[RMDB]
The record gives the reactivity of an RNA of 207 nucleotides to 2A3 and DMS. It was measured as part of the RMDB library M2RFPK. For 2A3, 1,906 sequencing reads were counted. For DMS the reverse transcriptase was MarathonRT.

RNA sequence: GGGAACGACUCGAGUAGAGUCGAAAAUUACUCUUGUUAGGUGAAAGUGGAUGGUCGCCGAGCCAGUCCGUACAUCCAAAAAGGACUCUAUGUAGUAGGAAGUCGAGAGCCUAUGAGAGUUAGAGUCAUGCCUAUUUUGUGUUCGCACAAAAUAGAAGUUACAACUUUUCUUCGGAAAAGUUGUAACAAAAGAAACAACAACAACAAC
Reactivity to 2A3 in 0.01 (KOAc 150mM, MgCl2 10mM, bicine 150mM(pH8.5), 24C), signal-to-noise 3, nucleotides 027 to 156: u090u040a050c010u010c020u080u070g080u090u180a050g010g000u050g080a160a040a040g050u050g030g010a010u000g020g010u070c040g050c190c040g010a030g030c060c040a060g100u000c010c010g020u030a030c000a030u020c020c000a000a050a010a050a050g040g000a000c000u000c010u020a070u090g080u060a060g040u010a010g010g080a140a010g040u050c070g020a020g010a000g240c000c000u020a020u020g040a050g010a010g040u000u030a010g010a000g030u040c020a040u110g060c000c000u000a000u000u000u000u000g010u000g020u020u040c080g030c060a000c000a000a000a000a010u000a010g020a030a020
Reactivity to DMS in 0.01 (KOAc 150mM, MgCl2 10mM, bicine 150mM(pH8.5), 24C), signal-to-noise 2, nucleotides 027 to 156: u010u000a050c000u010c010u000u020g000u000u030a080g000g050u000g000a140a130a110g030u010g000g020a250u000g000g000u000c030g040c030c040g030a210g030c040c030a100g030u010c020c000g000u010a070c090a080u010c010c000a000a060a080a170a200g020g000a030c010u010c030u000a040u000g020u010a300g000u000a030g010g010a090a070g030u000c150g000a180g020a300g040c010c000u000a020u000g010a290g000a120g050u010u010a100g000a110g020u030c010a080u010g030c070c000u020a010u000u000u000u000g030u000g010u000u010c300g020c030a000c000a020a000a010a040u010a010g020a070a130